RNA sequence: GGGAACGACUCGAGUAGAGUCGAAAAUCAUUAAUCACAAAAAAAGACGAUACAAAUGCAGCGUUGAGCCCGAUAACUGUUUUCAGCUUCUAUUUCGGUGGCGCUGAAAGUAGCAACUCUUCCGUUGACUAUAUCCUCGUUUCGACGAGGAUAUAGUAAAAGAAACAACAACAACAAC
Reactivity to DMS in 0.01 (KOAc 150mM, MgCl2 10mM, bicine 150mM(pH8.5), 24C), signal-to-noise 4, nucleotides 027 to 126: u020c040a170u040u050a080a090u040c090a090c130a010a000a090a160a040a090a050g040a050c120g030a090u000a040c110a050a050a040u020g000c020a050g010c040g000u010u010g000a150g000c080c030c010g000a060u020a050a100c030u010g000u040u000u020u010c000a020g010c060u010u050c030u030a040u020u010u030c070g020g010u000g010g010c300g030c000u000g010a020a000a020g020u000a000g010c130a020a060c160u010c070u010u010c060c030g020u000u020g010
Reactivity to 2A3 in 0.01 (KOAc 150mM, MgCl2 10mM, bicine 150mM(pH8.5), 24C), signal-to-noise 6, nucleotides 027 to 126: u040c010a050u130u250a150a070u140c080a030c130a140a150a030a000a000a030a050g100a090c070g010a020u060a090c040a020a150a010u130g050c010a010g010c020g020u050u070g040a080g130c000c000c010g020a040u090a140a050c020u030g060u070u040u080u110c000a000g000c010u110u040c010u160a130u060u080u050c080g110g000u030g030g010c030g000c020u000g000a040a010a000g040u030a020g050c070a080a120c010u010c030u160u020c040c030g030u010u100g010